Chemical mapping of a 207-nucleotide RNA with DMS and 2A3. The 2A3 profile rests on 1,242 reads. DMS adducts were read by reverse transcription with MarathonRT. As a SHAPE reagent, 2A3 marks flexible, mostly unpaired nucleotides at the ribose 2'-OH.

RNA sequence: GGGAACGACUCGAGUAGAGUCGAAAACACAUUGCCCAGUCAAGCUUUCUCCAGCUGGUCAGAUAAUAUUUCACUGAGGUCUAAAGAGAAGAAAUGUUAUGAACAGGAGCAACUCUCUGCUUCCCUGACUCUUAAUUCCUUCUGAUUGAUUGGUAUAGGCUGAUUUUAAUUUCGAUUAAAAUCAGCCAAAAGAAACAACAACAACAAC
Reactivity to DMS in 0.01 (KOAc 150mM, MgCl2 10mM, bicine 150mM(pH8.5), 24C), signal-to-noise 2, nucleotides 027 to 156: c040a090c100a080u000u010g030c060c000c020a130g030u000c100a040a100g000c040u000u000u000c020u010c070c010a110g010c060u000g010g020u010c030a060g000a130u010a060a140u000a070u000u010u000c050a110c090u020g020a160g040g000u010c070u010a030a120a090g020a100g020a090a070g000a020a030a020u010g020u000u010a090u010g010a080a300c050a060g000g010a080g000c060a060a090c150u000c100u020c080u000g030c030u000u000c060c010c030u000g000a060c060u010c020u000u010a070a140u000u000c040c020u000u030c020u000g000a140u030u010g000a110u010u010g010g020u010a120u000a110
Reactivity to 2A3 in 0.01 (KOAc 150mM, MgCl2 10mM, bicine 150mM(pH8.5), 24C), signal-to-noise 3, nucleotides 027 to 156: c090a010c040a080u080u150g030c000c020c040a020g060u070c090a100a050g000c030u020u020u110c040u030c030c010a010g000c040u040g010g040u050c010a010g050a050u040a150a050u070a200u080u140u060c060a040c070u060g040a010g090g000u000c020u110a080a100a000g060a020g020a140a010g030a020a090a030u190g000u130u120a100u160g070a070a020c010a040g000g030a020g020c000a010a130c010u060c010u060c080u170g020c000u120u090c060c010c000u050g050a090c010u010c010u050u040a070a060u060u070c030c010u020u100c030u090g030a170u070u040g040a100u030u030g020g020u200a040u150a140